[RMDB]
RNA sequence: GGGAACGACUCGAGUAGAGUCGAAAAACAAAAUACGCCAGCUUCUCAAAGGUGUCACCCUUGACAAGUUGCGUGAUUAUUUAGCUGACUAUGACGUAGCAGUCACUGCCGGCCCAUUCAUGGAUAAGAAUCCGCGCCUUCGGGCGCGGAAAAAGAAACAACAACAACAAC
Reactivity to DMS in 0.01 (KOAc 150mM, MgCl2 10mM, bicine 150mM(pH8.5), 24C), signal-to-noise 1, nucleotides 027 to 129: a000c100a120a000a050a040u000a000c080g020c000c080a010g000c070u020u020c120u000c000a050a050a070g020g020u050g000u020c190a140c230c000c170u040u000g000a040c070a090a000g000u050u000g000c000g000u000g010a110u180u000a000u000u040u050a230g040c000u000g050a030c040u070a050u000g000a070c050g000u000a000g050c000a060g080u090c110a020c200u000g100c080c120g000g000c000c000c010a120u020u100c110a130u070g000g060a020u090a000a000g000a020a060
Reactivity to 2A3 in 0.01 (KOAc 150mM, MgCl2 10mM, bicine 150mM(pH8.5), 24C), signal-to-noise 1, nucleotides 027 to 129: a000c020a000a000a000a000u030a000c000g000c040c000a000g020c000u010u010c020u000c000a000a040a010g060g000u070g230u300c190a010c000c000c000u000u000g000a000c000a020a020g050u100u000g000c040g000u030g040a030u010u090a050u010u080u000a000g010c000u030g030a130c050u060a030u100g100a000c030g030u030a000g100c000a050g090u000c000a000c030u000g000c000c000g030g000c000c000c010a000u050u090c040a000u090g130g000a040u110a100a020g060a000a000